Record summary
This 177-nucleotide RNA was probed chemically with 2A3 and DMS. Source: RMDB library RFMREP, as collected in RNAgym. For 2A3 the reverse transcriptase was SuperScript II with manganese. High DMS reactivity at an A or C suggests that its Watson-Crick edge is free.
RNA sequence: GGGAACGACUCGAGUAGAGUCGAAAAUUGCUCAAAUGAGUAUUCCAAACAACAGCUUGUGAAGCAAUGAUUACUGUCAUAGUCUCUGCAUGUGGAUUGUUGUUGAGAUGCUCAUUUGAGGAAGCAACAAAUUAGUUGUGUUCGCACAACUAAUUUGAAAAGAAACAACAACAACAAC
Reactivity to 2A3 in 0.01 (KOAc 150mM, MgCl2 10mM, bicine 150mM(pH8.5), 24C), signal-to-noise 6, nucleotides 027 to 126: u030u050g050c000u000c000a000a010a010u010g000a000g010u000a040u180u000c010c000a080a030a010c000a000a000c000a010g010c010u040u020g000u020g050a030a010g020c020a030a030u010g020a020u030u260a300c130u270g010u030c000a010u020a050g060u050c000u000c030u040g010c000a020u030g020u060g110g170a220u140u110g000u010u000g010u000u010g030a120g000a040u010g010c000u000c000a000u010u000u000g000a000g000g000a010a000g070c010a010a090
Reactivity to DMS in 0.01 (KOAc 150mM, MgCl2 10mM, bicine 150mM(pH8.5), 24C), signal-to-noise 6, nucleotides 027 to 126: u000u000g010c010u010c000a000a010a010u000g010a010g010u000a010u010u000c010c030a110a040a020c000a010a000c010a100g000c010u000u010g030u000g010a040a020g010c040a300a030u010g000a010u000u010a140c300u010g010u000c010a010u000a160g000u010c010u010c020u000g000c010a010u000g010u000g020g010a160u010u010g010u000u000g010u000u000g010a110g000a010u000g000c000u000c000a010u000u000u010g010a010g000g010a020a040g010c130a080a140